[RMDB]
The data come from the RNA Mapping Database (RMDB), library OK2TRN. Structure probing data (DMS and 2A3) for a 177-nucleotide construct.

RNA sequence: GGGAACGACUCGAGUAGAGUCGAAAACGAUAUGGGCUCGGGCUAGCCGCCACGCCGACGGCGCACGCCAAACCGGCCGACCCGCUGCCCGCCCUACGAGCCGAAGGGCUUGGCGUUGGCGUGCAGCGGAGGCGAACAGGUUCGCCUGUUCGCCUCCAAAAGAAACAACAACAACAAC
Reactivity to DMS in 0.01 (KOAc 150mM, MgCl2 10mM, bicine 150mM(pH8.5), 24C), signal-to-noise 7, nucleotides 027 to 126: c100g000a120u000a080u000g020g010g000c050u000c100g000g010g010c040u000a170g010c040c030g020c040c040a090c210g010c160c050g010a070c050g010g010c020g020c130a090c190g000c030c030a030a080a180c130c070g000g000c030c020g000a130c080c020c020g000c050u000g010c000c020c040g010c000c000c040u000a070c010g000a020g000c000c000g010a160a100g010g010g000c000u010u000g010g000c110g000u000u000g010g010c010g010u000g010c000a020g010c030
Reactivity to 2A3 in 0.01 (KOAc 150mM, MgCl2 10mM, bicine 150mM(pH8.5), 24C), signal-to-noise 4, nucleotides 027 to 126: c030g030a050u080a140u300g100g010g020c110u110c130g030g050g000c040u050a020g050c050c010g000c040c020a090c070g240c120c050g020a050c030g000g010c000g010c020a050c100g010c020c010a080a090a090c050c020g030g000c010c010g020a080c000c000c010g000c010u010g000c010c070c000g000c000c000c000u030a050c020g010a010g000c000c010g060a090a090g110g010g010c050u000u030g090g010c160g060u050u090g000g010c000g000u020g010c000a000g010c000

For 2A3, 7,516 sequencing reads were counted.
The reactions ran in a buffer of 150 mM KOAc, 10 mM MgCl2 and 150 mM bicine (pH 8.5), at 24 C.